[RMDB]
RNA sequence: GGGAACGACUCGAGUAGAGUCGAAAAGUAGUGUUUGAUUAGUAGGUCAAGGAGCUGCGUGUAGUGAGUGCCAAGGUGUUAUCCCUUGGGUGUUAGACUCGGCUACUCUGACAGCCUGAAGGGAUGACCGCGGUACGAGCUUCGGCUCGUGUCGCGGAAAAGAAACAACAACAACAAC
Reactivity to 2A3 in 0.01 (KOAc 150mM, MgCl2 10mM, bicine 150mM(pH8.5), 24C), signal-to-noise 6, nucleotides 027 to 126: g040u070a010g010u010g040u030u050u040g050a040u040u030a040g080u030a030g000g060u010c020a010a040g040g020a060g010c000u010g000c030g020u040g000u010a040g010u020g050a010g000u040g100c000c010a030a020g030g010u080g100u300u200a070u130c020c000c000u000u000g030g020g000u060g050u020u080a030g010a010c010u000c040g050g000c030u020a010c000u000c030u060g030a060c000a020g110c000c000u050g070a030a030g030g000g010a020u050g020a010
Reactivity to DMS in 0.01 (KOAc 150mM, MgCl2 10mM, bicine 150mM(pH8.5), 24C), signal-to-noise 3, nucleotides 027 to 126: g010u000a050g020u010g010u020u010u010g000a060u010u020a070g010u020a060g000g010u000c030a060a100g000g000a060g020c020u000g000c060g010u000g010u000a020g030u000g000a050g000u010g000c040c010a040a060g000g020u010g010u030u020a100u030c110c000c000u000u000g000g000g020u020g010u020u040a090g010a030c030u010c050g010g010c020u010a060c090u000c030u000g010a070c040a040g020c000c010u010g010a060a060g010g010g010a050u000g000a170